[RMDB]
RNA sequence: GGGAACGACUCGAGUAGAGUCGAAAAUCCUAAGUCAAGGGGAACAGCGUUUGACGCCUUGUGGAGAGCUAUCGGAAACGAUAGCUCGAUGAAACAAGGCCGAGCUGUUUACUUGAUAUGGAAAAGAGACUGGUUCAGUUCGCUGAACCAGUCUCAACCUCAGUUAAGAGUUCGCUCUUAACUGAGGAAAAGAAACAACAACAACAAC
Reactivity to 2A3 in 0.01 (KOAc 150mM, MgCl2 10mM, bicine 150mM(pH8.5), 24C), signal-to-noise 4, nucleotides 027 to 156: u020c010c010u030a120a010g020u000c000a000a000g010g050g100g010a020a000c000a000g030c050g080u160u260u250g140a120c070g000c000c010u020u010g010u000g010g020a030g020a000g010c000u000a000u010c010g030g030a140a050a020c010g010a010u000a000g000c000u000c000g010a030u010g000a000a000a000c000a000a000g000g000c010c000g010a010g000c000u000g010u000u000u000a010c000u000u010g000a000u000a050u130g070g030a030a100a060a070g020a010g000a000c000u010g000g020u000u010c000a000g000u040u140c170g010c200u000g000a000a000c000c000a000g000u000c000u000c000a000a000
Reactivity to DMS in 0.01 (KOAc 150mM, MgCl2 10mM, bicine 150mM(pH8.5), 24C), signal-to-noise 1, nucleotides 027 to 156: u000c000c000u010a070a220g030u000c010a050a020g040g000g040g000a000a030c000a000g040c000g060u010u000u000g000a170c160g010c000c000u000u000g010u000g000g010a180g000a020g000c010u020a020u000c000g030g000a220a180a290c020g030a000u010a020g010c000u000c010g000a030u020g000a220a140a030c000a020a000g000g000c010c010g010a150g020c000u000g000u000u000u000a040c000u000u010g000a050u020a300u000g000g010a090a030a090a190g000a120g040a030c000u000g030g010u000u000c000a000g040u000u040c300g000c000u020g030a020a020c000c000a010g000u010c000u000c000a030a050
An RNA of 207 nucleotides, treated with 2A3 and DMS and read out base by base. 2A3 adducts were read by reverse transcription with SuperScript II with manganese. The RNA was probed in 150 mM KOAc, 10 mM MgCl2 and 150 mM bicine (pH 8.5) at 24 C. The DMS profile rests on 2,828 reads. The data come from the RNA Mapping Database (RMDB), library RNAMAK.